[RMDB]
RNA sequence: GGGAACGACUCGAGUAGAGUCGAAAACAGGAGCUUAGCAUAGCUCCAUUCUACUAUGCAGCUAGUCGUCGUUUUCGACGUCUAGGAUAGACCGCUACAGCAGGGUCCAUGAACUGCUGAUUACCGCAUCUCGUAGCGCGGGUUCUGGCUACGUACAAUAUCCAGGUCAUUUCGAUGACCUGGAUAUAAAAGAAACAACAACAACAAC
Reactivity to 2A3 in 0.01 (KOAc 150mM, MgCl2 10mM, bicine 150mM(pH8.5), 24C), signal-to-noise 3, nucleotides 027 to 156: c050a040g010g000a000g000c030u040u050a030g060c120a090u070a090g000c030u000c000c000a000u010u010c000u030a130c010u030a060u150g070c050a050g060c030u000a000g030u010c010g000u010c020g020u010u080u200u300c050g000a000c000g000u000c010u010a010g020g000a010u040a090g010a000c000c010g000c020u090a060c010a010g010c000a000g030g020g010u030c140c050a160u180g060a040a030c000u000g000c000u000g010a030u000u210a040c000c020g000c040a040u020c080u010c110g000u010a000g000c000g000c030g040g010g000u040u150c090u120g070g000c010u000a030c010g000u000a020c040a030
Reactivity to DMS in 0.01 (KOAc 150mM, MgCl2 10mM, bicine 150mM(pH8.5), 24C), signal-to-noise 1, nucleotides 027 to 156: c050a160g000g010a040g030c020u000u000a190g050c080a050u000a020g020c000u010c040c240a040u000u000c040u000a020c020u010a030u020g060c070a240g040c010u000a040g000u000c010g020u000c020g000u000u000u010u000c020g030a010c020g030u000c040u010a050g010g000a170u010a070g020a110c040c050g000c020u010a090c040a070g030c000a040g000g010g000u020c040c130a130u010g000a060a060c000u000g000c020u000g010a190u000u000a020c030c030g030c050a170u010c060u000c060g030u000a020g020c000g010c060g030g000g020u010u000c030u000g020g020c000u000a020c040g030u000a080c160a160
This 207-nucleotide RNA was probed chemically with 2A3 and DMS.
The data come from the RNA Mapping Database (RMDB), library OK3TST.
For DMS, 3,175 sequencing reads were counted.
For 2A3, 2,248 sequencing reads were counted.